[RMDB]
RNA sequence: GGGAACGACUCGAGUAGAGUCGAAAAGAUAUGGAGGUGAUGUACAGCAACAGCUAUGUUCGGAAACGAACAUAGACAUGCUGAACAUACCUCCUAAGUCAAAGCGUACAGCUUCGGCUGUACGCAAGUGUUCCCAUCAGUUCGCUGAUGGGAACACAAAAGAAACAACAACAACAAC
Reactivity to 2A3 in 0.01 (KOAc 150mM, MgCl2 10mM, bicine 150mM(pH8.5), 24C), signal-to-noise 2, nucleotides 027 to 126: g010a030u110a030u200g020g000a000g000g090u200g300a090u020g000u030a060c000a030g000c020a040a140c020a230g060c020u000a000u000g000u000u000c010g000g050a010a070a050c010g050a000a010c000a000u000a000g020a010c000a060u030g000c000u010g000a000a000c000a000u000a000c000c020u050c000c000u000a040a000g080u000c060a080a120a010g020c020g000u020a030c000a000g000c050u020u150c210g190g010c000u010g000u000a000c010g000c000a010a010
Reactivity to DMS in 0.01 (KOAc 150mM, MgCl2 10mM, bicine 150mM(pH8.5), 24C), signal-to-noise 1, nucleotides 027 to 126: g000a070u000a300u000g020g000a090g000g000u020g010a060u000g030u000a120c010a020g000c010a020a010c300a300g010c020u000a000u000g000u000u000c000g050g000a040a070a180c000g050a030a000c000a000u000a010g010a030c120a190u000g010c000u000g010a150a010c000a000u000a050c000c000u010c000c000u010a000a000g020u000c040a120a050a140g030c000g020u000a000c030a020g000c010u000u030c290g050g000c000u000g030u000a000c000g000c030a000a000